RNA sequence: GGGAACGACUCGAGUAGAGUCGAAAAAGGGAGGAUCGGAUGGGAAGAGUAUAUCCUACGGGAAUCCGCGAUCCCCUCUCACGUCCAACCCAUCCCCGGUCCGAGUGAAGGGGGACUCCGGGACGCCAAGCAUGGUCCUUCGGGACCAUGAAAAGAAACAACAACAACAAC
Reactivity to 2A3 in 0.01 (KOAc 150mM, MgCl2 10mM, bicine 150mM(pH8.5), 24C), signal-to-noise 7, nucleotides 027 to 129: a000g030g010g010a040g000g000a030u060c030g010g040a050u080g040g010g020a080a040g040a060g090u080a060u020a060u120c000c000u060a080c150g040g000g020a050a020u050c040c020g020c030g060a080u060c000c010c020c000u020c000u020c010a070c030g040u000c000c010a060a060c030c000c020a060u070c020c000c000c000g060g050u030c010c020g050a070g070u200g050a060a080g000g000g010g000g020a010c020u010c030c020g010g000g010a010c030g010c040c030a030a040g070
Reactivity to DMS in 0.01 (KOAc 150mM, MgCl2 10mM, bicine 150mM(pH8.5), 24C), signal-to-noise 5, nucleotides 027 to 129: a000g030g030g030a120g040g020a000u020c150g030g020a070u040g000g050g000a070a080g010a130g030u060a000u000a000u050c040c020u000a080c140g020g010g050a040a110u020c070c030g000c080g030a080u020c010c030c020c010u030c040u000c040a070c150g000u000c000c070a060a130c020c010c010a150u070c000c000c000c000g030g020u000c050c130g000a130g020u080g050a070a070g070g000g050g010g000a040c080u030c080c090g030g000g030a050c000g010c150c070a080a090g050